[RMDB]
About this RNA:
The record gives the reactivity of an RNA of 177 nucleotides to 2A3 and DMS.
RNA sequence: GGGAACGACUCGAGUAGAGUCGAAAAGAAGUAGAACAUUCGGGCAAAGAUAAUCUGUAGUUUGUUCUAGACGACGGGUAAGAACAUUAGUUCUAGACAACGGCACAGGAGCCUUUUCUUGGGACUCCCGUCUGUGACGGUUCGCCGUCACAGACGGAAAAGAAACAACAACAACAAC
Reactivity to 2A3 in 0.01 (KOAc 150mM, MgCl2 10mM, bicine 150mM(pH8.5), 24C), signal-to-noise 2, nucleotides 027 to 126: g150a030a010g110u150a000g000a040a020c030a060u110u020c010g000g050g000c110a290a110a000g170a130u090a210a080u140c050u020g000u000a030g030u030u000u110g070u140u000c010u020a000g060a070c030g040a010c130g160g020g100u190a150a090g100a170a050c030a050u120u170a050g000u060u000c000u000a000g030a000c000a080a000c070g120g040c050a010c000a040g060g010a000g000c040c000u030u220u040u070c040u040u110g160g000g000a030c000u040c000
Reactivity to DMS in 0.01 (KOAc 150mM, MgCl2 10mM, bicine 150mM(pH8.5), 24C), signal-to-noise 1, nucleotides 027 to 126: g010a100a010g000u030a110g000a000a040c150a090u000u000c010g090g000g030c000a070a020a040g040a200u040a200a070u000c110u040g000u000a110g010u000u000u000g010u000u000c000u000a030g000a150c030g000a110c090g000g010g000u070a300a210g000a000a000c010a100u000u000a170g050u020u000c000u000a040g000a070c090a000a120c100g000g010c160a020c010a160g000g020a160g020c070c000u000u000u000u000c060u080u000g000g050g020a100c020u000c000
For 2A3 the reverse transcriptase was SuperScript II with manganese.